This 177-nucleotide RNA was probed chemically with 2A3 and DMS. The DMS profile rests on 11,713 reads. The reactions ran in a buffer of 150 mM KOAc, 10 mM MgCl2 and 150 mM bicine (pH 8.5), at 24 C.

RNA sequence: GGGAACGACUCGAGUAGAGUCGAAAAUCAUAGCUUCACCACCGCGACCUGGUCCUCCACGAGCUGGCCCGCGGCCGCGAGCUCAGCUUUUACCUUCCCGCCCACCUCCUCGCGCAGGUACACCGAAAUGACAAUUAAGGUUCGCCUUAAUUGUCAUAAAAGAAACAACAACAACAAC
Reactivity to 2A3 in 0.01 (KOAc 150mM, MgCl2 10mM, bicine 150mM(pH8.5), 24C), signal-to-noise 3, nucleotides 027 to 126: u050c020a030u040a120g010c020u110u070c030a040c030c000a020c000c000g030c020g030a080c000c010u040g030g030u000c000c000u030c010c000a060c060g020a020g030c010u020g010g010c010c000c000g030c020g090g120c120c110g010c030g020a010g000c030u050c180a010g000c000u050u030u060u090a070c010c010u030u020c000c010c000g020c010c000c000a060c010c000u010c000c010u020c000g050c010g010c030a020g030g040u050a030c030a030c030c010g020a100a130
Reactivity to DMS in 0.01 (KOAc 150mM, MgCl2 10mM, bicine 150mM(pH8.5), 24C), signal-to-noise 7, nucleotides 027 to 126: u010c070a090u000a100g010c060u000u000c040a080c050c030a070c080c040g010c060g010a080c060c020u000g010g020u000c020c020u000c040c050a100c150g000a050g010c020u000g000g010c020c010c030g010c040g010g020c150c130g010c020g000a030g000c010u010c020a030g010c020u000u000u000u000a090c080c070u000u000c020c010c010g000c050c020c020a100c040c020u000c010c020u010c050g010c040g020c040a040g010g010u000a060c100a110c060c040g000a050a100